[RMDB]
RNA sequence: GGGAACGACUCGAGUAGAGUCGAAAAUCAAACAGUUUGCUAAUGGGUUUGUCGUCCGUAUAGGAGCAGCUGCCAAUUCCACUGGCACUGUUAUUAUUAGCCCAUCUACCAGCGCUACUAUACGAAAUGACUUUGCAGUAUUCGUACUGCAAAGUCAAAAAGAAACAACAACAACAAC
Reactivity to 2A3 in 0.01 (KOAc 150mM, MgCl2 10mM, bicine 150mM(pH8.5), 24C), signal-to-noise 3, nucleotides 027 to 126: u110c050a000a020a040c000a010g040u110u190u110g070c010u090a090a050u090g000g000g080u100u120u150g070u070c080g050u040c010c050g050u050a080u070a150g020g000a000g000c040a020g000c020u030g010c050c030a020a060u220u110c030c000a060c070u000g000g000c010a000c000u010g090u010u010a070u120u120a030u020u080a060g030c010c020c000a040u000c020u100a080c020c020a010g010c020g020c050u040a030c020u040a030u030a110c050g060a040a090a130
Reactivity to DMS in 0.01 (KOAc 150mM, MgCl2 10mM, bicine 150mM(pH8.5), 24C), signal-to-noise 2, nucleotides 027 to 126: u020c130a060a070a050c040a030g000u040u020u010g000c030u000a040a020u000g000g010g020u000u000u000g030u000c050g000u000c080c000g040u000a030u040a040g000g000a010g020c000a100g050c140u010g050c140c130a020a110u050u040c030c030a000c200u000g000g020c000a030c010u020g020u020u000a030u000u000a140u010u100a030g000c030c010c000a080u010c100u000a100c170c040a020g010c000g000c000u020a050c040u000a020u000a020c000g000a120a060a100
This 177-nucleotide RNA was probed chemically with 2A3 and DMS.
2A3 adducts were read by reverse transcription with SuperScript II with manganese.
The DMS profile rests on 1,965 reads.
The reactions ran in a buffer of 150 mM KOAc, 10 mM MgCl2 and 150 mM bicine (pH 8.5), at 24 C.
Values are in units of 0.01, from 0 to 300, in steps of 10.